[RMDB]
RNA sequence: GGGAACGACUCGAGUAGAGUCGAAAAGGCCAGGUUGGAUGGGGCUUUGAGCAACCUGGUCUAGUGGAAGGCAUCCCUGCCCGUGGCAGGGGGGGUGGAACUAGAUGAUCUUUAAGGUCCCUUCCAACCAGUCAUAUGGUUUCGACCAUAUGACUGGAAAAGAAACAACAACAACAAC
Reactivity to 2A3 in 0.01 (KOAc 150mM, MgCl2 10mM, bicine 150mM(pH8.5), 24C), signal-to-noise 1, nucleotides 027 to 126: g020g010c020c010a010g020g040u000u020g010g060a120u060g020g010g030g020c030u100u060u110g050a050g020c020a030a040c000c020u010g030g000u000c000u000a010g010u000g030g080a070a060g060g040c030a050u030c010c010c010u030g050c000c010c100g150u210g020g000c000a000g000g000g000g000g000g030g050u110g030g030a020a020c020u040a060g010a090u120g010a040u100c050u080u130u090a060a020g000g020u020c000c000c000u000u000c000c000a020a020
Reactivity to DMS in 0.01 (KOAc 150mM, MgCl2 10mM, bicine 150mM(pH8.5), 24C), signal-to-noise 3, nucleotides 027 to 126: g010g000c030c010a050g010g010u000u000g010g010a070u010g010g010g000g010c020u000u000u000g000a060g020c120a050a050c090c090u000g000g010u000c000u000a020g010u000g000g010a290a110g010g010c090a080u000c000c000c010u000g000c000c000c300g000u010g030g020c020a030g000g010g000g010g010g010g010u000g010g000a210a040c050u000a040g000a050u000g010a070u000c030u000u000u010a050a050g010g020u000c010c010c010u000u000c000c000a050a120
Background:
Chemical mapping of a 177-nucleotide RNA with 2A3 and DMS. DMS adducts were read by reverse transcription with MarathonRT. Values cover nucleotides 27 to 126. The DMS profile rests on 4,143 reads. Source: RMDB library OK2TST, as collected in RNAgym.